[RMDB]
RNA sequence: GGGAACGACUCGAGUAGAGUCGAAAAGCAUCCUGCAUCCUUCGCGGGAACUUCGCAGAAGCCCAUCAGGUGAGGGGAGGCCAUACCUUUUCAGCCCCUGAAUGACUUAGCAUCAGGUAAGGCUCGGAGCAUGUACAACCAGAGCCACCUGGGAGCAUGGAUAUGUAGAAUUCGUUCUACAUAUCCAAAAAGAAACAACAACAACAAC
Reactivity to DMS in 0.01 (KOAc 150mM, MgCl2 10mM, bicine 150mM(pH8.5), 24C), signal-to-noise 4, nucleotides 027 to 156: g020c020a170u000c010c000u000g010c030a200u000c100c120u010u010c120g010c040g010g030g020a100a020c040u000u000c050g010c060a160g010a100a160g000c020c010c020a180u000c040a030g000g010u000g000a180g000g000g000g020a070g030g000c040c130a090u020a300c030c020u000u000u000u000c030a100g000c030c030c010c010u000g010a080a070u010g010a070c040u000u010a100g020c040a120u000c010a040g010g000u000a060a120g010g020c000u000c010g030g020a170g000c060a100u000g020u000a140c070a080a090c010c010a140g020a080g040c000c010a040c020c020u000g000g010g000a100g050c020a210
Reactivity to 2A3 in 0.01 (KOAc 150mM, MgCl2 10mM, bicine 150mM(pH8.5), 24C), signal-to-noise 4, nucleotides 027 to 156: g030c010a050u040c000c010u000g000c010a080u110c050c040u200u180c150g020c030g010g020g010a070a090c050u150u150c120g040c040a040g030a120a010g050c000c000c000a020u020c010a010g040g000u040g040a050g030g000g010g010a030g020g000c060c020a060u090a170c070c000u050u030u040u070c030a030g030c020c010c000c000u020g050a100a120u070g060a050c050u050u120a030g010c010a050u050c000a010g060g000u090a210a070g020g000c000u020c010g030g010a030g040c070a110u190g050u120a080c030a080a020c070c040a080g010a010g000c000c010a030c000c010u000g010g000g020a090g030c020a050